Record summary: Structure probing data (DMS) for a 177-nucleotide construct. The reactions ran in a buffer of 150 mM KOAc, 10 mM MgCl2 and 150 mM bicine (pH 8.5), at 24 C. Values cover nucleotides 27 to 126.
RNA sequence: GGGAACGACUCGAGUAGAGUCGAAAAUAAGUGCGGCUGCGGAGACCUUACCGUUCUCAGGCUUUCUACAACGAAUGGCCGGGACGUAGUAAACGUCUUCGGCCUUGAUAUUAGCUGCUUCGAGUAGCCAGGGAAAAGUCUUCGGACUUUUCCCUGGAAAAGAAACAACAACAACAAC
Reactivity to DMS in 0.01 (KOAc 150mM, MgCl2 10mM, bicine 150mM(pH8.5), 24C), signal-to-noise 1, nucleotides 027 to 126: u020a070a040g000u000g000c090g020g000c040u000g010c060g030g000a030g000a050c050c030u000u000a110c080c050g000u010u000c010u000c030a120g010g000c000u000u010u000c030u010a120c210a060a070c300g000a110a060u000g000g040c030c000g000g000g030a010c000g010u000a130g020u020a040a070a020c070g020u010c000u000u010c000g000g000c000c000u000u000g000a070u020a100u020u020a060g010c000u010g000c030u010u020c100g010a090g020u000a030g000